This 177-nucleotide RNA was probed chemically with DMS and 2A3. Values cover nucleotides 27 to 126. Conditions: 150 mM KOAc, 10 mM MgCl2 and 150 mM bicine (pH 8.5), 24 C. High 2A3 reactivity points to a flexible backbone, as in loops and unpaired stretches. For DMS the reverse transcriptase was MarathonRT. 2A3 adducts were read by reverse transcription with SuperScript II with manganese. The data come from the RNA Mapping Database (RMDB), library OK2TRN. The 2A3 profile rests on 1,912 reads.
[RMDB]
RNA sequence: GGGAACGACUCGAGUAGAGUCGAAAAGUAAUGAGCCAGCCCUGCCUACUUUAAUAUAUGAAUUUACCGGGAGACCUGAUACCAGUCGGCACAGUGCUGCCGCCGCAUCCUGCUUUACCGUCAGCAGGCUAAGACUGGUAUUCGUACCAGUCUUAGCAAAAGAAACAACAACAACAAC
Reactivity to DMS in 0.01 (KOAc 150mM, MgCl2 10mM, bicine 150mM(pH8.5), 24C), signal-to-noise 3, nucleotides 027 to 126: g030u000a070a090u000g010a100g000c020c040a100g000c030c030c050u010g000c050c010u000a050c050u010u010u020a070a090u000a090u000a120u020g020a070a100u000u000u000a080c090c060g000g000g000a110g000a040c070c030u000g000a070u010a080c050c040a070g010u000c030g020g010c040a020c070a130g030u000g000c110u000g000c020c030g020c040c060g010c110a060u010c030c010u000g000c020u020u000u020a120c090c050g010u010c120a060g000c080a050g000
Reactivity to 2A3 in 0.01 (KOAc 150mM, MgCl2 10mM, bicine 150mM(pH8.5), 24C), signal-to-noise 2, nucleotides 027 to 126: g030u070a000a150u080g020a000g030c000c000a010g000c000c030c020u040g000c000c000u060a060c020u170u190u100a210a100u140a020u010a070u200g050a100a080u120u100u050a080c050c050g020g010g010a040g020a030c030c000u020g010a000u030a080c000c020a030g060u030c020g020g070c030a020c020a020g190u100g070c010u010g020c020c030g040c000c000g060c020a030u060c000c030u000g030c020u090u060u080a090c010c000g080u060c020a000g000c020a020g120